[RMDB]
RNA sequence: GGGAACGACUCGAGUAGAGUCGAAAAACAAUCAAUCAUAAGGAUAGGGUGAUAGGUUACCGUCACGGAACAUUCACCAGGCAAAUUAGAAAUAAUUUGAUUGAACGCGUAGCUGAUGGUAGACCGCAUUCGGAGACUUGUUCGCAAGUCUCCGAAUAAAAGAAACAACAACAACAAC
Reactivity to DMS in 0.01 (KOAc 150mM, MgCl2 10mM, bicine 150mM(pH8.5), 24C), signal-to-noise 1, nucleotides 027 to 126: a100c100a130a130u010c050a110a060u000c040a020u000a050a060g000g000a090u010a080g010g010g030u000g000a090u010a060g000g010u000u000a080c010c000g000u000c060a040c080g060g020a080a090c080a080u000u010c030a030c300c080a060g020g020c010a010a050a020u000u000a000g000a090a140a110u000a030a000u000u000u000g000a060u000u000g000a070a080c100g000c120g000u000a110g040c120u000g010a010u000g000g010u000a100g000a030c000c010g020c110
Reactivity to 2A3 in 0.01 (KOAc 150mM, MgCl2 10mM, bicine 150mM(pH8.5), 24C), signal-to-noise 1, nucleotides 027 to 126: a010c080a000a000u180c010a020a050u030c030a030u140a180a090g200g030a090u080a130g120g120g000u020g060a120u000a160g000g060u000u000a130c000c000g110u150c040a010c070g110g050a060a000c000a050u130u100c010a040c120c040a040g120g000c010a000a040a000u040u060a030g120a020a010a000u040a010a000u000u000u030g000a070u010u070g030a090a020c060g060c030g150u070a040g070c030u040g000a000u070g040g010u010a080g040a110c000c000g000c050

Chemical mapping of a 177-nucleotide RNA with DMS and 2A3. Conditions: 150 mM KOAc, 10 mM MgCl2 and 150 mM bicine (pH 8.5), 24 C. The DMS profile rests on 733 reads.